[RMDB]
RNA sequence: GGGAACGACUCGAGUAGAGUCGAAAAACGUGGAUAGCCGCUCACAUGGUAGAGCCUCGACAAGUAAUCAAUUUGUUAAAACGGGUGAGCGGUAACGCUAUGAAGCUCCGGGGACGGAGUGAGCGUGAUCUAGAGAAUUCUUCGGAAUUCUCUAGAUAAAAGAAACAACAACAACAAC
Reactivity to 2A3 in 0.01 (KOAc 150mM, MgCl2 10mM, bicine 150mM(pH8.5), 24C), signal-to-noise 7, nucleotides 027 to 126: a000c070g040u100g040g040a110u080a110g020c000c000g000c000u020c000a010c010a070u130g100g000u130a090g030a030g150c000c040u060c040g030a020c020a030a010g070u130a100a140u150c110a050a110u060u020u030g030u040u070a070a090a050a040c070g130g010g000u000g000a000g000c000g000g000u000a000a000c000g000c000u040a120u300g020a030a000g000c000u000c000c000g000g010g040g020a030c010g000g010a010g010u040g020a000g010c010g010u020g020
Reactivity to DMS in 0.01 (KOAc 150mM, MgCl2 10mM, bicine 150mM(pH8.5), 24C), signal-to-noise 7, nucleotides 027 to 126: a090c120g010u010g000g000a120u010a130g010c010c000g000c000u010c000a010c010a080u010g000g010u010a090g000a130g000c060c040u020c130g010a020c020a020a030g000u010a130a130u030c230a080a040u010u000u010g000u000u010a040a060a090a080c090g010g000g010u000g000a010g000c000g000g000u000a020a010c010g010c000u010a120u030g020a060a270g010c000u000c000c000g010g000g050g010a210c010g000g000a020g010u000g010a020g010c000g010u000g010

Notes: Chemical mapping of a 177-nucleotide RNA with 2A3 and DMS. 2A3 is a SHAPE reagent: it acylates the 2'-hydroxyl of flexible nucleotides of all four kinds. DMS adducts were read by reverse transcription with MarathonRT. Source: RMDB libraries RFM100 and RFMREP, as collected in RNAgym.